[RMDB]
RNA sequence: GGGAACGACUCGAGUAGAGUCGAAAAAGGAAGACAAGCUCAGCGUCUGGCCCUAUUGGGCGACCAAGAUGCGCACUUCUUCCAGCCAGGCGGAAGGCGCAUCGCGUGAGUUUCAGGUCGCGACGCAGGACGGACUGAUAUUCGUAUCAGUCCGUCCAAAAGAAACAACAACAACAAC
Reactivity to 2A3 in 0.01 (KOAc 150mM, MgCl2 10mM, bicine 150mM(pH8.5), 24C), signal-to-noise 2, nucleotides 027 to 126: a000g060g030a030a010g010a020c010a060a070g000c050u040c120a030g000c010g060u010c030u050g060g050c010c000c010u060a200u080u270g060g000g010c020g000a010c020c020a020a010g000a000u000g010c010g000c010a210c210u010u030c000u000u030c010c000a060g200c150c020a050g000g020c030g000g000a010a000g040g000c000g020c000a010u000c000g020c060g040u140g030a070g030u060u110u190c010a020g000g050u020c010g010c020g060a040c000g010c040a040
Reactivity to DMS in 0.01 (KOAc 150mM, MgCl2 10mM, bicine 150mM(pH8.5), 24C), signal-to-noise 2, nucleotides 027 to 126: a120g000g020a090a050g010a070c060a070a130g010c040u010c070a110g000c060g030u010c000u000g020g000c000c000c060u000a100u010u010g010g010g010c020g010a050c110c010a080a080g010a020u000g000c000g000c020a090c020u000u000c000u000u000c000c000a100g030c190c190a070g000g010c020g000g000a020a000g010g020c010g000c000a000u000c000g000c240g000u000g000a110g020u000u000u020c100a130g000g020u000c010g000c060g010a060c100g040c090a170